Description
Chemical mapping of a 177-nucleotide RNA with DMS and 2A3. The DMS profile rests on 672 reads. The RNA was probed in 150 mM KOAc, 10 mM MgCl2 and 150 mM bicine (pH 8.5) at 24 C. For DMS the reverse transcriptase was MarathonRT. Values cover nucleotides 27 to 126.
RNA sequence: GGGAACGACUCGAGUAGAGUCGAAAAGGGUGUACCUGUUAGAGAUGGUAUGACUCAGGAAGAAGUCGAAAAUCUUAUUCAGCAAGGGAGACAAACAAACGCACGCUUGGGAGUAUUUGGCUUAGAGGCGUACUUUUGCAUUCGUGCAAAAGUACGCAAAAGAAACAACAACAACAAC
Reactivity to DMS in 0.01 (KOAc 150mM, MgCl2 10mM, bicine 150mM(pH8.5), 24C), signal-to-noise 1, nucleotides 027 to 126: g000g000g000u000g010u000a020c030c000u010g010u000u000a290g030a120g020a050u000g020g010u010a080u020g010a070c020u000c030a100g000g050a170a120g020a040a040g010u000c000g000a090a070a070a090u010c040u000u000a110u000u010c100a100g010c120a080a150g030g000g000a050g000a110c160a030a030a060c160a040a070a050c200g010c070a020c040g000c110u000u000g000g030g050a090g000u000a040u000u030u010g020g010c070u000u000a060g020a090g010
Reactivity to 2A3 in 0.01 (KOAc 150mM, MgCl2 10mM, bicine 150mM(pH8.5), 24C), signal-to-noise 1, nucleotides 027 to 126: g040g010g000u060g010u060a020c020c010u010g080u090u170a070g000a000g000a030u080g000g000u130a070u140g100a020c000u010c030a000g090g010a020a090g060a040a010g010u030c060g150a080a040a000a000u000c010u080u030a090u180u080c010a030g000c000a030a090g000g000g040a080g020a040c050a020a120a010c020a030a140a000c070g000c090a010c000g070c060u040u040g080g000g000a000g020u050a080u060u070u040g070g000c000u030u090a140g010a050g070